[RMDB]
RNA sequence: GGGAACGACUCGAGUAGAGUCGAAAAAUCUAAGUCAUUAUGGGCAAAAGGGACCCUAUGGCUUAGGGGAAAGUCCCCGGACACUGGGUAGAGAGUACCUGGGGUGUAACCCCCCACACCUGAUCUAAUACCAGACGAGAUUCGUCUCGUCUGGUAUAAAAGAAACAACAACAACAAC
Reactivity to DMS in 0.01 (KOAc 150mM, MgCl2 10mM, bicine 150mM(pH8.5), 24C), signal-to-noise 3, nucleotides 027 to 126: a120u010c000u000a000a010g020u010c000a010u000u040a060u020g000g020g040c030a120a130a120a140g050g000g010a270c010c000c000u000a050u000g010g000c000u010u010a000g000g000g010g000a110a090a170g000u000c000c000c010c110g000g000a110c060a110c050u000g010g000g000u000a010g000a110g000a160g000u000a020c020c000u010g020g010g010g030u010g030u020a060a220c060c020c000c000c000c080a150c090a020c060c040u010g000a140u000c030u010a060
Reactivity to 2A3 in 0.01 (KOAc 150mM, MgCl2 10mM, bicine 150mM(pH8.5), 24C), signal-to-noise 5, nucleotides 027 to 126: a000u030c000u000a000a000g000u020c000a000u020u220a100u300g000g010g000c040a030a070a160a180g110g060g130a270c000c010c000u010a000u000g000g000c000u000u000a000g000g000g000g000a030a060a040g080u070c000c000c000c010g080g010a050c040a040c090u030g000g040g020u080a020g050a010g000a050g240u010a030c020c010u040g000g000g010g010u020g000u060a100a120c000c010c000c000c010c000a020c000a010c000c010u050g020a070u030c040u070a030
Conditions: 150 mM KOAc, 10 mM MgCl2 and 150 mM bicine (pH 8.5), 24 C. The record gives the reactivity of an RNA of 177 nucleotides to DMS and 2A3.